[RMDB]
RNA sequence: GGGAACGACUCGAGUAGAGUCGAAAAACUGAAGCACCGAUUCGCACGCACGACUUGAGGGGGCGACCGGCGCUGGAUCGGCUAUCGGCAAGGCAAUAGCGCUGGCGUUCGCCGCACAAGGCGGCCAGCAUCACGGUGGAUUCGUCCACCGUGAUGCAAAAGAAACAACAACAACAAC
Reactivity to 2A3 in 0.01 (KOAc 150mM, MgCl2 10mM, bicine 150mM(pH8.5), 24C), signal-to-noise 1, nucleotides 027 to 126: a000c040u060g100a090a000g030c000a030c060c000g050a120u090u040c030g000c100a060c100g020c050a100c060g180a020c050u060u060g040a170g020g040g000g000g000c010g090a110c030c000g010g000c020g050c010u040g000g090a150u130c050g050g060c020u050a020u110c030g030g000c080a110a070g050g000c030a050a040u050a170g040c060g000c050u010g000g000c000g050u040u040c030g000c000c000g010c040a070c000a020a030g110g030c000g000g000c020c000a020
Reactivity to DMS in 0.01 (KOAc 150mM, MgCl2 10mM, bicine 150mM(pH8.5), 24C), signal-to-noise 2, nucleotides 027 to 126: a110c110u000g020a130a090g020c070a110c050c030g000a130u020u000c060g020c140a050c160g000c010a170c040g010a040c040u000u000g000a180g010g010g000g000g010c030g000a080c070c050g000g010c060g010c010u000g010g000a150u000c120g000g000c020u010a070u020c090g020g020c060a080a080g010g010c040a050a190u020a010g010c040g010c010u000g000g030c100g000u000u000c020g010c000c010g030c120a120c140a030a110g000g000c020g030g010c050c090a060